[RMDB]
RNA sequence: GGGAACGACUCGAGUAGAGUCGAAAAUCAGCAGGCCCAGCAGGAGCGCGCUCGCAAGGAGGAAGACCUAUCGGCUCUGCACCGGGAGGUGGACAACUUCGCCGACUUCACCAGCCUGGCGGCAUUCCGAACAAUUGUCAUUCGUGACAAUUGUUCGAAAAGAAACAACAACAACAAC
Reactivity to 2A3 in 0.01 (KOAc 150mM, MgCl2 10mM, bicine 150mM(pH8.5), 24C), signal-to-noise 2, nucleotides 027 to 126: u090c020a000g060c040a020g060g000c000c000c030a040g020c030a040g040g040a040g030c050g000c010g000c040u050c030g030c060a040a040g030g010a020g010g010a060a020g050a060c000c020u020a080u080c010g020g000c020u030c060u120g020c030a020c020c030g000g040g010a050g010g000u070g010g030a020c040a140a040c110u080u040c040g000c020c040g080a110c000u030u050c040a040c070c000a020g050c000c010u060g050g000c030g040g040c020a050u130u000c040
Reactivity to DMS in 0.01 (KOAc 150mM, MgCl2 10mM, bicine 150mM(pH8.5), 24C), signal-to-noise 4, nucleotides 027 to 126: u000c120a100g010c040a070g010g010c030c020c060a120g010c080a100g000g000a090g000c070g010c120g020c040u000c110g030c110a100a080g010g010a120g020g010a070a120g000a090c080c050u010a160u010c050g000g010c020u000c080u000g010c080a080c040c040g020g020g010a110g010g010u000g010g000a110c100a050a090c150u000u000c110g020c020c010g000a060c050u000u000c060a060c080c090a070g000c040c020u000g020g010c050g000g010c120a110u020u000c050